The record gives the reactivity of an RNA of 177 nucleotides to 2A3 and DMS. For DMS, 1,079 sequencing reads were counted. For DMS the reverse transcriptase was MarathonRT. The data come from the RNA Mapping Database (RMDB), library RFMREP. Conditions: 150 mM KOAc, 10 mM MgCl2 and 150 mM bicine (pH 8.5), 24 C.
[RMDB]
RNA sequence: GGGAACGACUCGAGUAGAGUCGAAAACCACACGUUAAAAAAGGCAGUCAUGCUGGCAGACUCAGGAGCAUCCUUGAUGGAUGGCUUGGGUGGAUAAGCUGGGAACCAAAGGGGUCGCACCCUACGGGUAAAGAUUCCAGUUCGCUGGAAUCUUUACAAAAGAAACAACAACAACAAC
Reactivity to 2A3 in 0.01 (KOAc 150mM, MgCl2 10mM, bicine 150mM(pH8.5), 24C), signal-to-noise 1, nucleotides 027 to 126: c000c000a030c010a010c040g180u120u190a000a000a010a230a090a000g090g000c030a020g060u090c030a060u170g020c000u000g000g000c010a000g010a020c000u000c010a000g020g000a060g180c020a010u050c020c030u150u090g250a140u300g020g000a000u020g010g060c000u000u020g000g020g000u020g040g010a060u040a050a010g000c010u050g020g010g000a050a020c000c020a050a040a050g000g030g010g000u120c030g000c020a060c010c000c010u020a040c040g140g030
Reactivity to DMS in 0.01 (KOAc 150mM, MgCl2 10mM, bicine 150mM(pH8.5), 24C), signal-to-noise 2, nucleotides 027 to 126: c000c000a100c180a150c080g010u000u000a000a010a110a080a080a140g000g000c080a030g010u000c090a030u010g010c020u000g000g030c110a170g000a060c000u000c010a010g000g000a050g040c010a020u000c000c000u000u000g010a120u020g020g000a000u000g000g000c020u000u000g000g000g000u020g010g010a140u010a020a050g040c000u000g000g020g010a110a080c010c010a020a190a080g010g010g000g000u010c200g020c130a240c020c020c000u010a030c290g000g010